About this RNA: This 207-nucleotide RNA was probed chemically with 2A3. Conditions: 150 mM KOAc, 10 mM MgCl2 and 150 mM bicine (pH 8.5), 24 C. 2A3 adducts were read by reverse transcription with SuperScript II with manganese.
[RMDB]
RNA sequence: GGGAACGACUCGAGUAGAGUCGAAAAUACUGUCACGUGCACUUAACACAACUAUCAUACUGUGGACAGUUGAUAUAUCAGGCAGAGUUGAGAUUGCAUACAAGUAUGGCAAGUCAAACGUAUCAACCUCACUUAAUCUGAAGCUGUAUAAAGGUCACCGCACAGUUCAGUUCGCUGAACUGUGCGGAAAAGAAACAACAACAACAAC
Reactivity to 2A3 in 0.01 (KOAc 150mM, MgCl2 10mM, bicine 150mM(pH8.5), 24C), signal-to-noise 1, nucleotides 027 to 156: u120a000c020u030g000u020c000a000c210g010u090g020c150a030c050u250u300a300a040c040a070c090a180a040c030u120a030u170c150a080u130a290c100u000g000u080g170g000a010c000a040g000u000u010g020a030u020a040u040a000u180c030a020g130g000c120a050g000a000g050u060u110g060a010g060a080u000u000g080c090a000u000a080c000a100a090g070u050a190u280g030g040c170a180a000g040u040c020a010a000a070c050g000u020a000u150c000a000a000c000c040u130c000a130c030u000u040a030a070u090c020u000g010a010a000g000c020u000g020u060a030u040a180a170a000g000g000u060c000a030

The data come from the RNA Mapping Database (RMDB), library OK3TST.